[RMDB]
RNA sequence: GGGAACGACUCGAGUAGAGUCGAAAAGGUGCAAGACACUCCGCGCCGAGUGUGAAGAUAUAUGUGAGGUACACGUCGGGUAGGCCUGCUUAUCACGCUAGUAGCAUUAGGGAAGUCUGCCGACUUCAAGCCUAAUCAGCUUCGGCUGAUUAGGCUUAAAAGAAACAACAACAACAAC
Reactivity to 2A3 in 0.01 (KOAc 150mM, MgCl2 10mM, bicine 150mM(pH8.5), 24C), signal-to-noise 2, nucleotides 027 to 126: g110g000u030g010c100a020a020g030a050c000a030c060u070c000c010g110c000g000c050c070g000a100g000u080g000u000g120a000a060g060a090u070a000u040a000u300g010u010g060a040g010g020u090a020c020a000c030g050u060c030g000g100g050u060a010g000g050c000c020u020g000c000u130u100a070u120c040a000c020g000c040u010a020g030u110a040g120c010a100u100u150a090g080g000g030a000a010g010u020c000u000g020c070c040g000a020c030u070u010c020
Reactivity to DMS in 0.01 (KOAc 150mM, MgCl2 10mM, bicine 150mM(pH8.5), 24C), signal-to-noise 2, nucleotides 027 to 126: g000g010u000g000c060a100a020g010a140c100a060c040u000c020c030g020c140g000c030c100g000a060g000u020g000u000g000a130a090g000a130u040a080u030a040u000g040u060g020a030g010g000u000a080c070a050c090g000u010c030g000g010g010u000a120g000g020c000c010u000g000c000u010u000a050u010c090a120c140g010c010u000a130g010u020a150g030c000a160u010u020a160g010g040g020a030a140g020u000c060u030g000c110c090g000a010c000u000u010c090

The record gives the reactivity of an RNA of 177 nucleotides to 2A3 and DMS. The 2A3 profile rests on 867 reads. Reactivities are given for positions 27 through 126.